[RMDB]
RNA sequence: GGGAACGACUCGAGUAGAGUCGAAAACUCAAUCACUACGGUGAUUGAGAAUGCUUACGCCUCAAUUAAGCUUGAUUUGAGUGCCUCUAGCAGAUAUAGACUGAAACAUUUAGUAUGGUCAAGCAGGGAGCAACAGCUCGAGUACGCUCGAGCUGAAAAUCAUACGACUCUUCGGAGUCGUAUGAUUAAAAGAAACAACAACAACAAC
Reactivity to 2A3 in 0.01 (KOAc 150mM, MgCl2 10mM, bicine 150mM(pH8.5), 24C), signal-to-noise 3, nucleotides 027 to 156: c000u000c000a000a010u010c000a000c000u030a020c180g090g000u000g000a000u000u000g000a000g000a010a040u050g000c000u040u080a040c220g010c010c000u030c030a040a100u080u080a090a070g070c050u050u150g090a100u030u050u100g010a010g000u170g010c000c010u010c020u040a000g000c020a010g100a030u150a020u060a060g070a030c070u070g110a040a220a010c000a020u060u120u050a080g060u100a060u200g030g020u030c010a010a000g030c030a030g020g050g030a060g010c040a010a070c000a040g000c000u000c000g010a000g000u020a030c230g040c080u000c000g000a000g000c000u000g000a000a000
Reactivity to DMS in 0.01 (KOAc 150mM, MgCl2 10mM, bicine 150mM(pH8.5), 24C), signal-to-noise 2, nucleotides 027 to 156: c000u000c010a010a020u000c020a000c030u000a110c250g090g000u000g010a030u000u010g020a020g010a080a070u000g000c030u000u000a080c060g000c000c010u000c060a090a060u000u000a100a130g010c070u000u000g000a070u010u000u000g010a020g040u020g040c010c050u010c030u000a040g030c010a130g000a120u000a160u000a140g000a140c040u000g020a140a080a050c050a060u010u000u000a120g030u010a110u010g000g000u010c030a030a070g020c020a170g010g020g000a110g030c030a070a160c010a030g020c000u000c000g010a050g050u000a150c260g060c020u000c010g030a040g030c000u000g000a010a000